This 177-nucleotide RNA was probed chemically with DMS and 2A3. For DMS, 834 sequencing reads were counted. The reactions ran in a buffer of 150 mM KOAc, 10 mM MgCl2 and 150 mM bicine (pH 8.5), at 24 C. It was measured as part of the RMDB library M2PK90. DMS adducts were read by reverse transcription with MarathonRT.

RNA sequence: GGGAACGACUCGAGUAGAGUCGAAAAUUAAAAGUACAGAUCACAUGACUAGAAAAAGAUCAGUACAAAAACUAGUCAUGAAAAAGAUUCGAAAUGGAUAUAGAAAUAUAUACCAUCGUAUCAAAAACAUAUUACAACACUUCGGUGUUGUAAUAUGAAAAGAAACAACAACAACAAC
Reactivity to DMS in 0.01 (KOAc 150mM, MgCl2 10mM, bicine 150mM(pH8.5), 24C), signal-to-noise 1, nucleotides 027 to 126: u020u000a070a010a050a190g000u000a150c090a090g010a090u020c110a170c000a010u000g000a000c000u050a030g000a040a050a100a220a070g010a170u000c150a130g020u000a070c080a130a070a130a140a050c010u000a010g000u000c000a000u000g000a020a150a040a100a130g000a030u000u000c010g000a040a080a010u000g010g010a030u000a000u000a010g000a140a090a150u000a010u000a000u000a170c000c020a010u000c050g000u000a020u000c050a030a050a070a110a160
Reactivity to 2A3 in 0.01 (KOAc 150mM, MgCl2 10mM, bicine 150mM(pH8.5), 24C), signal-to-noise 1, nucleotides 027 to 126: u130u020a140a030a030a000g020u010a070c040a090g110a110u100c100a060c010a100u010g000a000c000u000a000g140a060a200a040a040a060g080a070u190c130a100g060u180a050c090a040a130a000a000a000c010u000a000g000u000c000a010u000g000a030a020a000a010a000g000a010u080u050c000g000a100a100a100u020g000g000a000u000a000u010a000g030a060a080a000u020a000u000a000u000a180c000c040a010u020c030g050u050a020u070c000a030a060a030a060a010